[RMDB]
Conditions: 150 mM KOAc, 10 mM MgCl2 and 150 mM bicine (pH 8.5), 24 C. An RNA of 177 nucleotides, treated with DMS and read out base by base. DMS adducts were read by reverse transcription with MarathonRT. High DMS reactivity at an A or C suggests that its Watson-Crick edge is free.
RNA sequence: GGGAACGACUCGAGUAGAGUCGAAAACCUCCAGAGGACCCCUUCAGCGAACAGAGAACUCUGACGCGCGAGGAGUAAGCCCAUAGCGAUGGAAAGAGAUGCUAGGAGUUAGAGGAGACCAGAACGAUCGGAAGUAUAAGUUCGCUUAUACUUCCGAAAAAGAAACAACAACAACAAC
Reactivity to DMS in 0.01 (KOAc 150mM, MgCl2 10mM, bicine 150mM(pH8.5), 24C), signal-to-noise 1, nucleotides 027 to 126: c080c010u000c080c050a170g020a150g000g000a110c060c020c090c030u000u000c040a140g000c030g000a110a110c030a020g000a080g000a100a140c070u010c010u000g010a190c080g050c030g060c120g020a040g000g050a080g000u000a020a160g000c030c010c030a070u000a080g030c020g000a070u000g020g010a050a090a130g000a070g000a030u000g000c090u010a050g010g020a130g000u000u000a000g010a100g010g010a080g000a130c050c020a080g000a070a120c150g020a090